[RMDB]
RNA sequence: GGGAACGACUCGAGUAGAGUCGAAAAGUAAAGUCAGGGGAAAUGACUUGGCAUUACAAAUCCUCCCUUGCUGAGACGCGACAUUUUCUGCUGGGAUAUAAACUGGGUGUCGGAGCCAAAUUGCAAUGCCAGGUCUAUUCUUGCCACUUUAAUGAGAACUCAUGGUUACUUUCGAGUAACCAUGAGUAAAAGAAACAACAACAACAAC
Reactivity to DMS in 0.01 (KOAc 150mM, MgCl2 10mM, bicine 150mM(pH8.5), 24C), signal-to-noise 2, nucleotides 027 to 156: g000u000a080a030a050g030u000c050a110g030g040g000g010a010a060a300u020g010a030c010u010u000g080g000c040a130u000u000a050c020a030a030a170u000c120c010u000c000c020c020u020u000g010c000u010g020a150g010a090c070g000c030g030a100c060a080u000u000u010u000c110u010g000c030u000g040g050g000a090u000a090u020a040a080a090c020u010g000g000g040u000g040u010c050g020g030a070g000c050c040a020a130a250u010u000g040c040a030a030u010g000c030c020a020g000g000u010c040u000a120u000u000c030u000u000g020c060c050a070c010u010u000u010a040a040u010g000a280g040a070
Reactivity to 2A3 in 0.01 (KOAc 150mM, MgCl2 10mM, bicine 150mM(pH8.5), 24C), signal-to-noise 4, nucleotides 027 to 156: g030u050a010a000a000g020u070c120a080g000g000g020g060a020a010a120u090g000a010c000u000u010g000g000c000a010u010u000a060c030a030a090a070u090c010c020u060c030c010c020u060u190g010c040u070g020a010g010a050c050g030c030g130a030c060a100u080u080u040u060c040u060g030c050u040g020g020g030a030u030a000u080a170a150a070c080u110g080g000g000u040g100u090c090g010g010a030g020c010c030a010a070a080u030u030g000c010a000a010u010g000c010c000a000g000g000u000c010u010a050u000u040c000u020u050g050c020c000a010c030u020u020u030a100a080u140g080a040g020a130